[RMDB]
RNA sequence: GGGAACGACUCGAGUAGAGUCGAAAAGAUAUGGAGUCCAGAUGCCGAUGAAACACCAACGAAUAGUAGUCGGAAACGACUACUACUAUUGGUGUGGAGGCAUUUGGACUCCUAAGUCAAAGGAUGACUAAUCGUGUUCGCACGAUUAGUCAUCCAAGAUAACGUCUUACUUCGGUAAGACGUUAUCAAAAGAAACAACAACAACAAC
Reactivity to 2A3 in 0.01 (KOAc 150mM, MgCl2 10mM, bicine 150mM(pH8.5), 24C), signal-to-noise 2, nucleotides 027 to 156: g010a000u010a000u030g000g000a010g000u000c000c000a000g000a000u000g010c000c050g300a300u020g000a000a000a000c000a000c020c000a010a030c080g080a010a010u000a000g000u000a000g010u000c010g000g000a000a000a000c000g000a000c000u000a000c000u000a000c010u080a080u030u000g000g000u000g000u000g000g000a000g000g010c000a000u000u000u000g000g000a000c000u000c000c000u000a000a000g000u000c000a030a020a000g000g000a000u000g000a000c000u000a010a000u000c000g000u000g020u090u110c300g000c070a000c000g010a000u000u010a000g000u000c000a000u000c000c000a000a000
Reactivity to DMS in 0.01 (KOAc 150mM, MgCl2 10mM, bicine 150mM(pH8.5), 24C), signal-to-noise 1, nucleotides 027 to 156: g020a030u000a100u000g000g000a070g010u020c000c000a010g000a030u000g010c000c050g000a180u010g030a270a190a040c000a020c010c000a000a030c030g040a040a040u000a030g020u000a020g020u010c000g000g020a020a030a050c010g000a050c010u000a010c000u000a000c010u000a140u010u000g010g010u000g020u010g000g000a050g070g020c000a000u010u000u010g000g000a020c000u000c000c000u000a000a060g010u000c020a130a130a110g030g050a020u000g010a040c010u000a010a000u000c000g010u010g010u020u010c300g000c010a030c020g000a020u000u020a000g020u000c010a000u000c000c010a010a030